[RMDB]
This 177-nucleotide RNA was probed chemically with DMS and 2A3. DMS adducts were read by reverse transcription with MarathonRT. It was measured as part of the RMDB library TTRDEL. 2A3 adducts were read by reverse transcription with SuperScript II with manganese.
RNA sequence: GGGAACGACUCGAGUAGAGUCGAAAAGAUAUGGAUCUCAGGGAGCGUCUGAUAUCGGAAACGAUAUCAACGCGAAGAACUGAGAGUCCUAAGUCAAAACCGCGCAGGACUUCGGUCCUGCGCGGAACAUGAAGGUACUGUUCGCAGUACCUUCAUGAAAAGAAACAACAACAACAAC
Reactivity to DMS in 0.01 (KOAc 150mM, MgCl2 10mM, bicine 150mM(pH8.5), 24C), signal-to-noise 1, nucleotides 027 to 126: g000a040u000a100u020g000g000a170u010c010u000c000a010g000g010g000a060g000c000g010u000c290u000g020a020u000a010u010c000g030g000a000a040a050c000g040a010u000a000u000c000a000a000c000g010c010g000a070a080g000a210a160c000u000g000a010g010a020g000u010c010c000u010a010a090g000u000c030a110a040a120a100c010c040g020c030g040c000a000g060g000a050c010u010u000c190g000g050u010c010c000u000g000c000g100c030g000g000a000a030
Reactivity to 2A3 in 0.01 (KOAc 150mM, MgCl2 10mM, bicine 150mM(pH8.5), 24C), signal-to-noise 1, nucleotides 027 to 126: g010a020u010a040u070g000g010a020u010c000u000c010a010g070g000g000a040g010c020g020u200c300u100g050a000u000a000u010c000g050g000a020a050a010c000g000a000u000a000u000c030a020a000c000g000c000g000a010a060g000a010a010c000u010g010a000g000a000g130u020c020c000u020a060a000g020u020c000a000a010a110a280c040c010g000c040g070c080a020g080g020a070c010u220u300c300g170g010u000c000c000u020g030c000g080c000g000g000a000a000